[RMDB]
The record gives the reactivity of an RNA of 207 nucleotides to 2A3.
RNA sequence: GGGAACGACUCGAGUAGAGUCGAAAAUGUCUAUAUGCCCCAGUUCAACAGAAGUUCUGAAAGCAUGCAGGAAUCCAGGUAAAAAUGGCUUGUCUAAUAGCUGCAUUUUGUUAGAUAAAUGUCCACCUCCAAGACCACCAACUUCACCAUACCCACACUCAUAGCGACGAUUCGUCGUCGCUAUGAGAAAAGAAACAACAACAACAAC
Reactivity to 2A3 in 0.01 (KOAc 150mM, MgCl2 10mM, bicine 150mM(pH8.5), 24C), signal-to-noise 2, nucleotides 027 to 156: u070g010u000c070u020a150u020a040u160g020c000c000c000c030a040g100u090u090c060a060a020c010a140g240a250a020g030u040u000c010u050g050a070a060a040g010c020a080u120g010c000a000g090g000a040a000u040c030c020a010g050g000u080a080a080a000a020a080u040g030g000c050u020u040g020u000c010u000a020a150u050a080g040c070u110g000c150a060u050u100u110u040g020u030u010a030g000a110u060a080a070a090u150g000u010c010c010a000c010c000u000c000c000a020a000g070a050c010c000a010c060c010a060a030c010u010u020c040a030c050c000a030u100a080c100c000c000a030c000a020

The reactions ran in a buffer of 150 mM KOAc, 10 mM MgCl2 and 150 mM bicine (pH 8.5), at 24 C. The 2A3 profile rests on 637 reads.